Chemical mapping of a 177-nucleotide RNA with DMS and 2A3. The RNA was probed in 150 mM KOAc, 10 mM MgCl2 and 150 mM bicine (pH 8.5) at 24 C. The DMS profile rests on 1,798 reads. 2A3 adducts were read by reverse transcription with SuperScript II with manganese.
RNA sequence: GGGAACGACUCGAGUAGAGUCGAAAAGUCUGAGGUCAUUUUCCGUGAGGGAGGCGCGCCAACGCGUGCAGCAGUCGCACCAGAAACCAAGAGCCUCUGUGCUUAUGCCAGGAGGAGGGCCUUGCCCGUCGCGUAAGGUUUUCGAACCUUACGCGACAAAAGAAACAACAACAACAAC
Reactivity to DMS in 0.01 (KOAc 150mM, MgCl2 10mM, bicine 150mM(pH8.5), 24C), signal-to-noise 1, nucleotides 027 to 126: g000u030c010u000g000a130g050g000u050c040a080u030u000u000u040c000c020g000u000g040a160g020g000g020a050g000g010c000g010c030g070c080c070a120a130c090g000c110g000u010g010c050a080g010c030a000g000u010c010g000c010a000c000c040a130g000a040a080a060c120c040a100a180g000a000g000c040c000u000c030u010g000u030g000c040u020u040a180u000g010c000c020a170g000g000a010g000g000a060g010g010g020c080c040u000u040g040c050c030c080
Reactivity to 2A3 in 0.01 (KOAc 150mM, MgCl2 10mM, bicine 150mM(pH8.5), 24C), signal-to-noise 4, nucleotides 027 to 126: g050u070c120u130g020a020g010g030u040c030a080u010u030u040u040c040c050g040u100g060a110g020g080g010a060g000g060c010g000c010g010c030c080a120a060c090g020c020g000u030g020c010a030g010c010a010g050u100c030g000c010a020c020c040a050g060a100a040a030c060c040a070a040g010a020g120c010c010u060c010u060g040u080g030c030u210u150a060u180g040c030c020a040g000g030a030g020g020a020g000g020g000c020c000u000u030g050c000c000c010